[RMDB]
RNA sequence: GGGAACGACUCGAGUAGAGUCGAAAAAUUAUAUCUAUGCCUUUGGGAUAUGUGUCUCAUGGUUUAGACUUAAUGCAAGCAGGGAGUGUCGUGCGUAGAGUUAACGUGCCCUACGUGUGUCUCCUAGAUAGAGAGGUCUUCGGACCUCUCAAAAGAAACAACAACAACAAC
Reactivity to DMS in 0.01 (KOAc 150mM, MgCl2 10mM, bicine 150mM(pH8.5), 24C), signal-to-noise 2, nucleotides 027 to 129: a000u130u000a040u040a160u000c020u010a030u030g030c040c050u120u020u000g000g000g030a060u060a000u100g050u000g050u010c000u010c020a060u000g020g040u000u080u010a050g010a010c060u000u020a030a070u030g100c200a030a170g030c160a230g000g000g000a000g040u020g020u060c040g040u070g040c000g030u020a070g010a000g010u030u030a190a060c300g030u070g010c070c000c000u060a010c000g060u050g020u040g030u000c010u010c000c010u010a110g000a040u000a060
Reactivity to 2A3 in 0.01 (KOAc 150mM, MgCl2 10mM, bicine 150mM(pH8.5), 24C), signal-to-noise 5, nucleotides 027 to 129: a000u050u030a020u010a040u000c010u000a020u010g020c000c000u030u140u130g010g000g040a020u080a100u270g300u190g050u010c010u010c010a020u020g000g000u020u020u010a000g000a000c010u010u020a010a000u050g070c070a020a110g110c070a170g010g000g030a010g000u110g080u150c010g000u000g010c050g000u010a010g010a010g050u040u060a110a080c130g110u250g020c000c000c000u000a000c000g010u040g000u010g000u000c010u000c010c010u040a030g030a130u150a040
The data come from the RNA Mapping Database (RMDB), library 15KLIB. Structure probing data (DMS and 2A3) for a 170-nucleotide construct. For 2A3, 6,166 sequencing reads were counted. Values cover nucleotides 27 to 129.